[RMDB]
RNA sequence: GGGAACGACUCGAGUAGAGUCGAAAAAUACUUCUCAGGAUGGCGCGUUGCAGUCCAACAAGAUCCAGGGACUGUACAGAAUUUUCCUAUACCUCGAGUCGGGUUUUGAAUCUAAGGUUGACUCGCUAAAACUUUACGUGGUUCGCCACGUAAAGAACAUGCUUUCCAAGUUCGCUUGGAAAGCAUGAAAAGAAACAACAACAACAAC
Reactivity to DMS in 0.01 (KOAc 150mM, MgCl2 10mM, bicine 150mM(pH8.5), 24C), signal-to-noise 1, nucleotides 027 to 156: a130u000a070c050u010u000c020u000c040a150g030g000a070u000g010g010c150g000c130g010u020u000g000c050a070g010u000c020c030a100a140c060a070a300g010a050u020c020c060a120g010g000g000a020c020u000g040u000a090c040a090g030a110a070u010u000u000u000c050c040u010a160u000a060c140c000u000c010g010a020g030u000c050g050g040g020u000u000u000u030g010a050a080u030c100u000a040a100g010g020u000u000g010a020c060u000c010g010c070u010a020a050a090a110c000u000u000u000a000c000g010u000g000g020u010u000c300g050c030c010a010c000g010u000a000a000a000g050a010a140
Reactivity to 2A3 in 0.01 (KOAc 150mM, MgCl2 10mM, bicine 150mM(pH8.5), 24C), signal-to-noise 2, nucleotides 027 to 156: a000u090a010c000u010u040c030u000c030a000g060g010a000u050g120g050c010g000c040g130u090u050g000c010a000g000u000c000c000a070a080c030a080a160g150a150u100c120c110a050g000g000g000a000c000u000g000u030a030c010a040g140a080a040u110u090u040u010c010c000u070a060u090a160c010c010u000c010g000a000g000u040c010g010g040g000u060u050u010u050g060a060a050u050c070u090a100a000g070g050u040u020g040a060c000u000c070g050c040u080a090a100a040a050c000u000u000u020a000c000g000u000g000g030u090u040c200g060c050c000a000c000g000u000a000a000a000g000a000a000